[RMDB]
RNA sequence: GGGAACGACUCGAGUAGAGUCGAAAACAAGCGCGUGCUGCGCGAGCCGCGCUGGGAAAUCCGCGUCGACUACGAUUUCGCCGGCGUGAUGCGCGCGUGCGCGCAGGCGCCGCGGCGCGGGCAGCGAUCCAUAUUAAUGAUUCGUCAUUAAUAUGGAAAAAGAAACAACAACAACAAC
Reactivity to DMS in 0.01 (KOAc 150mM, MgCl2 10mM, bicine 150mM(pH8.5), 24C), signal-to-noise 5, nucleotides 027 to 126: c050a130a090g000c010g010c010g020u000g020c020u000g010c020g010c020g000a080g020c030c020g010c010g020c010u000g000g010g000a060a080a090u010c020c040g000c040g020u010c070g010a130c150u000a110c120g000a260u000u000u010c030g020c100c010g000g010c010g020u000g000a130u010g020c010g030c000g040c120g020u000g020c010g070c000g040c040a040g010g000c020g020c030c030g040c040g010g000c010g010c010g010g010g020c220a040g010c050g000a140
Reactivity to 2A3 in 0.01 (KOAc 150mM, MgCl2 10mM, bicine 150mM(pH8.5), 24C), signal-to-noise 4, nucleotides 027 to 126: c030a050a030g000c020g000c010g110u190g020c040u060g020c040g000c020g020a010g020c010c010g010c000g000c000u010g030g020g050a070a100a020u030c020c010g010c010g040u050c030g060a110c060u230a110c130g180a200u090u110u190c140g030c080c000g000g010c000g000u020g030a210u070g000c020g020c000g010c090g100u150g060c070g020c010g010c010a010g010g020c010g030c030c000g000c020g030g000c010g000c000g000g020g030c040a030g040c020g020a030
Chemical mapping of a 177-nucleotide RNA with DMS and 2A3. The RNA was probed in 150 mM KOAc, 10 mM MgCl2 and 150 mM bicine (pH 8.5) at 24 C. The 2A3 profile rests on 8,501 reads. For DMS, 9,441 sequencing reads were counted.